[RMDB]
RNA sequence: GGGAACGACUCGAGUAGAGUCGAAAAUAGGCGGCUUCGGCACGGGGAAGACUGAGACCCUGGCUAACUGCGCCAUCCGCGACGCUACUCAUUCCAGCAAUGCGCUUGUGGCGCUGUAUGAGCCUACCUAUGACCUAGUGAAGCUAAUCCUUGUGCCGUAAGGAAUGCCAUUCGUGGCAUUCCUUACAAAAGAAACAACAACAACAAC
Reactivity to 2A3 in 0.01 (KOAc 150mM, MgCl2 10mM, bicine 150mM(pH8.5), 24C), signal-to-noise 3, nucleotides 027 to 156: u050a010g010g010c010g010g010c000u080u040c110g050g010c070a030c050g010g000g000g020a070a100g110a100c190u200g000a060g090a150c010c000c000u010g010g000c010u020a070a020c030u040g000c000g000c000c010a000u070c030c030g000c010g000a070c070g010c020u030a040c000u090c250a170u190u040c110c040a010g000c020a050a090u200g050c010g030c050u060u160g010u000g010g000c010g000c010u030g020u010a080u190g040a000g000c020c010u060a090c010c000u020a020u050g010a030c000c010u040a040g050u070g170a050a000g030c070u080a160a030u110c000c020u080u100g030u040g030c040c020
Reactivity to DMS in 0.01 (KOAc 150mM, MgCl2 10mM, bicine 150mM(pH8.5), 24C), signal-to-noise 1, nucleotides 027 to 156: u010a070g020g010c300g000g000c020u000u000c070g000g000c000a040c030g000g000g000g000a140a100g000a230c080u010g000a130g000a160c010c010c030u040g010g030c020u000a090a180c070u000g000c000g020c000c020a090u000c270c160g000c020g010a020c020g000c020u000a070c030u010c030a160u000u000c210c060a120g000c070a050a100u000g020c000g010c000u000u030g030u010g020g000c060g000c010u020g000u020a110u000g010a070g000c010c000u000a060c030c010u000a040u000g010a120c010c040u010a080g010u000g000a120a100g030c030u010a080a170u000c020c030u000u000g040u000g000c020c110
Chemical mapping of a 207-nucleotide RNA with 2A3 and DMS. Reactivities are given for positions 27 through 156. DMS (dimethyl sulfate) methylates the pairing face of unpaired adenines and cytosines. The 2A3 profile rests on 1,746 reads.